Chemical mapping of a 177-nucleotide RNA with 2A3. Reactivities are given for positions 27 through 126.

[RMDB]
RNA sequence: GGGAACGACUCGAGUAGAGUCGAAAAUGACGGUCCAGCCGCAAUCGGUGCCGGUCGUCACCGAACUGCCGGGCCGCACCAGUGCCUUCCUGGUCGCCCAGGUGCGGGCACGGGUCGACGGUAUCGUGCCGGAUACUUUGUUCGCAAAGUAUCCGGCAAAAGAAACAACAACAACAAC
Reactivity to 2A3 in 0.01 (KOAc 150mM, MgCl2 10mM, bicine 150mM(pH8.5), 24C), signal-to-noise 2, nucleotides 027 to 126: u080g090a020c030g060g030u020c070c060a000g000c000c010g070c070a040a120u150c010g020g000u010g040c010c050g080g020u080c030g040u000c030a020c050c030g120a240a260c000u030g060c000c000g020g000g000c020c000g000c020a000c020c010a030g030u010g000c000c000u020u060c040c000u030g090g040u150c130g130c020c020c000a000g070g000u120g040c160g000g010g030c030a010c000g010g000g000u060c040g000a080c020g040g060u090a100u160c080g020u090